[RMDB]
Overview
Chemical mapping of a 177-nucleotide RNA with 2A3 and DMS. The DMS profile rests on 1,471 reads. For DMS the reverse transcriptase was MarathonRT. In probing experiments dimethyl sulfate is read out at A N1 and C N3, which are open when not base-paired.

RNA sequence: GGGAACGACUCGAGUAGAGUCGAAAAUUGGCCUGCAGGCCAUGGUGCGAGCAGCUUCCACAGCCUGGCAAGACCUUUGACCGCACAGCCUCCGCGUGGCCGGAGAGGCCGUGUGGUCAUUGCGUCAGGUUUAGCAUGGGUUCGCCCAUGCUAAACCAAAAGAAACAACAACAACAAC
Reactivity to 2A3 in 0.01 (KOAc 150mM, MgCl2 10mM, bicine 150mM(pH8.5), 24C), signal-to-noise 3, nucleotides 027 to 126: u060u060g120g030c000c010u040g070c070a080g020g000c010c010a000u030g010g010u050g030c020g010a060g050c080a000g020c040u230u040c020c000a040c030a020g020c010c010u020g020g000c070a040a040g030a040c000c000u000u000u000g000a000c000c000g000c000a000c000a000g010c000c000u010c000c000g050c090g140u300g180g010c130c010g000g000a140g000a000g030g000c010c000g000u000g000u000g000g000u000c010a000u010u030g020c050g010u000c020a050
Reactivity to DMS in 0.01 (KOAc 150mM, MgCl2 10mM, bicine 150mM(pH8.5), 24C), signal-to-noise 1, nucleotides 027 to 126: u010u000g000g000c030c010u000g000c140a290g000g000c000c000a100u030g000g070u000g000c040g020a130g010c160a140g000c070u010u000c030c020a040c150a110g010c000c000u000g000g020c060a080a140g000a020c090c000u000u000u030g000a000c000c040g000c000a000c000a070g000c030c000u000c000c060g000c070g050u000g000g000c140c070g080g010a090g000a090g010g000c010c000g000u030g000u000g000g060u000c000a000u000u010g000c220g000u000c020a040

The reactions ran in a buffer of 150 mM KOAc, 10 mM MgCl2 and 150 mM bicine (pH 8.5), at 24 C.